[RMDB]
RNA sequence: GGGAACGACUCGAGUAGAGUCGAAAAGCACAACUUUGCAGGGCAAGCCUAUUGGUAUGUUCUUCCCUUAUGACAUCGAACUUGUCACAGGAAAGCAAAAUAUUCUCCUGCGCAAGUAUGGCCGUGGCGACAUUCUCAUCUUCGGAUGAGAAUGUCGAAAAGAAACAACAACAACAAC
Reactivity to DMS in 0.01 (KOAc 150mM, MgCl2 10mM, bicine 150mM(pH8.5), 24C), signal-to-noise 1, nucleotides 027 to 126: g070c040a120c050a110a100c120u000u000u010g000c080a030g000g010g060c160a110a300g000c060c000u000a150u000u000g020g050u000a080u010g040u000u000c050u000u000c010c020c030u000u000a180u000g000a060c010a010u000c140g050a080a140c020u000u000g000u000c010a030c060a020g050g000a000a050a010g000c110a060a060a090a070u010a050u020u000c060u010c000c010u010g010c080g000c050a020a000g020u000a050u000g000g010c050c060g010u040g010g020
Reactivity to 2A3 in 0.01 (KOAc 150mM, MgCl2 10mM, bicine 150mM(pH8.5), 24C), signal-to-noise 1, nucleotides 027 to 126: g030c030a030c000a050a110c060u140u040u050g030c000a050g040g020g000c020a040a020g020c020c000u070a200u100u130g030g020u060a100u100g060u030u000c010u020u060c010c010c000u010u110a230u050g030a010c000a020u030c100g050a040a090c030u000u070g050u120c030a000c020a050g050g020a010a070a010g080c130a070a040a100a070u200a120u090u060c000u010c000c010u010g000c030g010c040a000a020g040u040a030u060g040g030c090c000g080u100g050g000
The record gives the reactivity of an RNA of 177 nucleotides to DMS and 2A3.
2A3 adducts were read by reverse transcription with SuperScript II with manganese.
Reactivities are given for positions 27 through 126.
Conditions: 150 mM KOAc, 10 mM MgCl2 and 150 mM bicine (pH 8.5), 24 C.